This 177-nucleotide RNA was probed chemically with DMS. DMS adducts were read by reverse transcription with MarathonRT.
RNA sequence: GGGAACGACUCGAGUAGAGUCGAAAACUUAAUCACAAUUCAGCCCUUUCACCGCCGGCAGGCUCCAUUUGCAUUCUGCCACAGAAAGCCAAGAUGAAAAGAAAGAGAGAGAGAAAGAGAGAGAGAGACACAGGGUUUAUUUCGAUAAACCCUGUGUAAAAGAAACAACAACAACAAC
Reactivity to DMS in 0.01 (KOAc 150mM, MgCl2 10mM, bicine 150mM(pH8.5), 24C), signal-to-noise 1, nucleotides 027 to 126: c060u000u020a070a070u000c090a050c130a130a150u000u000c120a090g060c040c060c060u000u000u000c030a060c070c070g020c040c110g000g070c070a060g020g010c040u000c070c020a120u000u020u000g020c140a110u000u000c060u010g020c010c070a070c150a070g020a040a100a060g010c020c120a120a050g000a040u000g020a050a070a030a180g000a040a030a010g000a050g020a050g000a080g000a040g000a060a030a090g000a110g000a040g010a080g020a000g020a070g000

The reactions ran in a buffer of 150 mM KOAc, 10 mM MgCl2 and 150 mM bicine (pH 8.5), at 24 C.